[RMDB]
RNA sequence: GGGAACGACUCGAGUAGAGUCGAAAACGGAUAUGGACGUCGUAAGUCUUUCAACACUUGCAAGCGAUAGAGAGAAAACGGUCUCCUAUCUGAGAGAGAAAGGUCUCCUCGUCACGUACACCCGGUGGAGAACAGUUGGAUUCGUCCAACUGUUCUCAAAAGAAACAACAACAACAAC
Reactivity to 2A3 in 0.01 (KOAc 150mM, MgCl2 10mM, bicine 150mM(pH8.5), 24C), signal-to-noise 2, nucleotides 027 to 126: c000g020g010a010u060a050u180g030g020a000c030g010u020c010g020u040a050a050g000u000c000u010u050u000c070a130a080c040a050c100u050u150g080c090a140a080g100c030g080a040u050a050g240a000g010a000g000a060a020a040a060c130g100g030u000c020u000c000c000u000a010u000c030u090g020a020g000a000g000a000g040a070a040a030g060g070u020c000u020c010c000u030c010g020u000c020a040c120g030u020a030c010a110c030c010c020g060g040u100g090
Reactivity to DMS in 0.01 (KOAc 150mM, MgCl2 10mM, bicine 150mM(pH8.5), 24C), signal-to-noise 3, nucleotides 027 to 126: c090g010g000a190u000a050u010g000g000a020c050g030u000c030g000u010a050a090g020u010c010u000u000u000c050a090a190c210a040c060u000u000g010c220a140a130g000c120g000a050u010a060g000a120g050a030g000a030a050a070a110c210g020g020u010c060u000c010c000u000a030u000c010u010g000a040g000a090g010a210g000a020a050a070g010g000u010c040u000c000c000u000c070g030u010c020a030c090g020u010a040c090a160c050c020c020g010g030u010g040
Conditions: 150 mM KOAc, 10 mM MgCl2 and 150 mM bicine (pH 8.5), 24 C.
The record gives the reactivity of an RNA of 177 nucleotides to 2A3 and DMS.
For DMS, 1,633 sequencing reads were counted.
For 2A3 the reverse transcriptase was SuperScript II with manganese.
For 2A3, 2,396 sequencing reads were counted.
Values are in units of 0.01, from 0 to 300, in steps of 10.
Reactivities are given for positions 27 through 126.